Structure probing data (DMS and 2A3) for a 177-nucleotide construct. The RNA was probed in 150 mM KOAc, 10 mM MgCl2 and 150 mM bicine (pH 8.5) at 24 C. For 2A3 the reverse transcriptase was SuperScript II with manganese. DMS adducts were read by reverse transcription with MarathonRT. The DMS profile rests on 3,125 reads.
[RMDB]
RNA sequence: GGGAACGACUCGAGUAGAGUCGAAAAGGAUCCUCUCACAGGAUUGUCUCUGUGUUCCGAAACUCCAACAGUAUUGCUUCGGGACACCUACAGCAAUACUGUAGGUAUAGAGGGUAGGAGAGGAUCGUAUACUGAUCAGCUUCGGCUGAUCAGUAUAAAAAGAAACAACAACAACAAC
Reactivity to DMS in 0.01 (KOAc 150mM, MgCl2 10mM, bicine 150mM(pH8.5), 24C), signal-to-noise 4, nucleotides 027 to 126: g030g010a020u000c020c010u000c010u010c010a130c070a110g000g010a130u020u030g010u020c040u000c010u000g020u000g020u010u000c010c000g010a040a070a080c050u000c180c080a100a080c140a100g010u010a190u000u010g020c040u000u000c220g000g010g000a060c220a060c010c010u010a030c090a010g010c060a090a060u010a300c000u000g000u000a010g000g020u000a050u000a000g010a100g000g000g010u010a080g010g000a040g000a010g010g000a000u000c000g030
Reactivity to 2A3 in 0.01 (KOAc 150mM, MgCl2 10mM, bicine 150mM(pH8.5), 24C), signal-to-noise 2, nucleotides 027 to 126: g120g000a020u000c020c000u000c000u000c000a150c030a060g120g130a230u120u140g160u090c010u020c010u040g030u000g000u060u000c000c000g000a010a020a000c020u070c070c010a050a020c020a140g120u120a100u150u140g030c020u010u040c040g020g020g010a030c040a090c020c000u000a020c020a000g020c030a040a120u060a250c010u010g000u000a010g000g000u020a040u110a080g060a020g080g030g060u060a050g030g030a020g000a000g000g010a000u000c000g000
Source: RMDB library OK2TRN, as collected in RNAgym.